[RMDB]
RNA sequence: GGGAACGACUCGAGUAGAGUCGAAAAGAGAGUUAUGACUUUUCUGGUUCUAGAUUAGAAUUUACUUUUAGCAAUGGAUCAAGUAGAUUCACAUUGCCUGACUUUGUGGAAAAUUACCACCCUGGCACUAAUUUAGGCUGUUCGCAGCCUAAAUUAGAAAAGAAACAACAACAACAAC
Reactivity to DMS in 0.01 (KOAc 150mM, MgCl2 10mM, bicine 150mM(pH8.5), 24C), signal-to-noise 3, nucleotides 027 to 126: g000a090g000a070g000u000u010a040u000g020a300c020u000u000u010u000c030u000g000g020u010u020c100u000a090g000a070u010u000a030g010a050a080u000u000u000a030c020u000u000u010u000a070g010c050a110a050u000g010g010a060u000c050a100a110g000u010a090g010a030u000u010c030a110c140a060u000u000g000c020c040u000g000a090c050u000u000u010g020u000g010g010a050a090a060a160u020u000a080c020c030a050c050c110c010u000g000g030c110a170
Reactivity to 2A3 in 0.01 (KOAc 150mM, MgCl2 10mM, bicine 150mM(pH8.5), 24C), signal-to-noise 2, nucleotides 027 to 126: g030a020g010a000g010u090u070a050u170g120a100c000u040u140u050u020c010u040g190g000u180u030c050u140a050g000a130u080u070a040g010a030a040u050u040u040a090c010u010u080u060u150a020g020c020a060a070u080g040g010a050u050c020a070a100g050u070a050g140a010u060u000c010a010c010a120u010u040g000c000c010u040g040a090c040u020u070u110g020u010g000g090a120a090a280a300u150u050a080c010c000a010c020c010c000u020g090g000c040a040
About this RNA:
The record gives the reactivity of an RNA of 177 nucleotides to DMS and 2A3. For 2A3, 1,449 sequencing reads were counted. For DMS the reverse transcriptase was MarathonRT.